[RMDB]
RNA sequence: GGGAACGACUCGAGUAGAGUCGAAAAAUAGGCUUAUCAAGAGAGGUGGAGGGACUGGCCCGAUGAAACCCGGCAGCCAGAAAUGGUGCCAAUUCCUGCAGCGGACACGUUGAAAGAUGAGCCGAUGUGACUAGCGCGUUCGCGCGCUAGAAAAGAAACAACAACAACAAC
Reactivity to 2A3 in 0.01 (KOAc 150mM, MgCl2 10mM, bicine 150mM(pH8.5), 24C), signal-to-noise 1, nucleotides 027 to 129: a000u130a000g000g000c000u000u000a020u060c180a200a000g160a000g010a030g090g000u060g000g010a010g020g000g020a000c020u030g040g020c020c000c030g070a090u050g020a010a030a010c000c010c000g000g000c020a030g210c000c000a000g010a000a030a030u000g000g000u030g000c000c000a010a010u020u000c040c000u100g000c010a010g000c000g000g010a030c040a000c080g000u020u030g070a080a040a000g000a010u010g000a000g000c020c010g000a010u120g030u020g010a080
Reactivity to DMS in 0.01 (KOAc 150mM, MgCl2 10mM, bicine 150mM(pH8.5), 24C), signal-to-noise 2, nucleotides 027 to 129: a010u050a050g020g010c050u000u030a030u030c060a140a090g130a180g050a150g030g040u000g000g010a000g000g000g000a140c080u030g010g110c030c060c030g000a000u010g030a030a140a070c000c020c050g000g000c240a060g050c040c000a000g010a010a010a010u040g010g050u010g040c070c000a060a020u000u040c020c050u000g020c050a080g010c040g050g010a110c110a010c020g050u080u010g000a050a060a050g040a050u080g020a010g060c020c020g010a040u040g000u020g040a080

Structure probing data (2A3 and DMS) for a 170-nucleotide construct. High 2A3 reactivity points to a flexible backbone, as in loops and unpaired stretches. The 2A3 profile rests on 3,397 reads.